RNA sequence: GGGAACGACUCGAGUAGAGUCGAAAAGAUAUGGAUGACCUACCCACCGGGAGUAUAGAGUAUCUUGGAUUUAAGCUCGGAAACGAGCUUUGUCAGAUACCUAUACUCCCGAGGGUCAUCCUAAGUCGAUAUUAUGCGUGUUCGCACGCAUAAUAUCAAAAGAAACAACAACAACAAC
Reactivity to 2A3 in 0.01 (KOAc 150mM, MgCl2 10mM, bicine 150mM(pH8.5), 24C), signal-to-noise 3, nucleotides 027 to 126: g120a130u300a290u300g000g010a000u000g020a020c010c030u270a300c190c010c030a030c000c030g000g000g020a010g030u000a030u010a020g160a060g060u000a020u040c060u210u300g280g000a080u300u300u220a000a000g000c000u000c030g000g000a010a060a060c010g000a000g030c000u000u010u010g020u020c020a000g000a000u000a000c010c010u000a000u000a010c000u000c010c000c000g010a000g000g010g020u020c000a000u000c010c000u010a040a010g250u190c190
Reactivity to DMS in 0.01 (KOAc 150mM, MgCl2 10mM, bicine 150mM(pH8.5), 24C), signal-to-noise 3, nucleotides 027 to 126: g000a110u020a140u010g010g000a010u000g000a010c000c020u000a170c030c000c000a300c090c000g000g020g000a020g010u010a010u000a000g000a140g000u000a000u000c000u010u000g030g000a010u000u020u000a010a010g020c000u000c000g010g010a100a110a150c000g000a020g010c000u000u000u000g010u010c020a040g010a010u000a010c000c000u000a000u000a010c000u000c000c000c010g000a000g000g020g000u000c000a010u000c000c000u000a000a070g010u010c130

Chemical mapping of a 177-nucleotide RNA with 2A3 and DMS.
DMS adducts were read by reverse transcription with MarathonRT.
For 2A3 the reverse transcriptase was SuperScript II with manganese.
The reactions ran in a buffer of 150 mM KOAc, 10 mM MgCl2 and 150 mM bicine (pH 8.5), at 24 C.
The 2A3 profile rests on 3,716 reads.